[RMDB]
RNA sequence: GGGAACGACUCGAGUAGAGUCGAAAACUUUGGCAUCCAGAGUCCCACGCGACCUCUUGAAGCGUGGGCGGCAACCGGGUCAAGCGCGAUCACGGUGCCGAGGUCAGCCCUUCUGGGGUGAUGCGGCCCAUUCCGAUGAAUUCGUUCAUCGGAAUGGAAAAGAAACAACAACAACAAC
Reactivity to 2A3 in 0.01 (KOAc 150mM, MgCl2 10mM, bicine 150mM(pH8.5), 24C), signal-to-noise 9, nucleotides 027 to 126: c040u150u060u160g090g000c020a020u030c040c040a030g000a010g070u040c000c010c000a000c000g020c000g030a060c010c040u090c020u090u140g070a040a000g000c000g000u010g000g000g000c000g000g000c010a020a040c000c000g010g000g000u010c030a110a070g200c110g060c110g170a000u010c010a010c120g000g010u010g000c000c000g000a000g000g000u020c020a030g020c000c000c000u140u110c100u240g020g000g000g010u080g020a040u060g010c020g040g040c000
Reactivity to DMS in 0.01 (KOAc 150mM, MgCl2 10mM, bicine 150mM(pH8.5), 24C), signal-to-noise 7, nucleotides 027 to 126: c050u010u020u010g010g000c030a030u010c050c190a080g000a030g010u010c000c000c000a010c000g010c010g010a040c020c070u000c060u010u020g010a060a120g010c010g020u000g000g000g010c000g000g000c000a030a030c000c000g000g010g000u000c010a140a140g020c230g020c200g000a010u000c010a030c010g000g000u000g010c000c000g000a030g000g010u000c070a300g000c020c000c010u000u020c170u030g000g000g010g010u000g000a020u010g010c030g000g010c110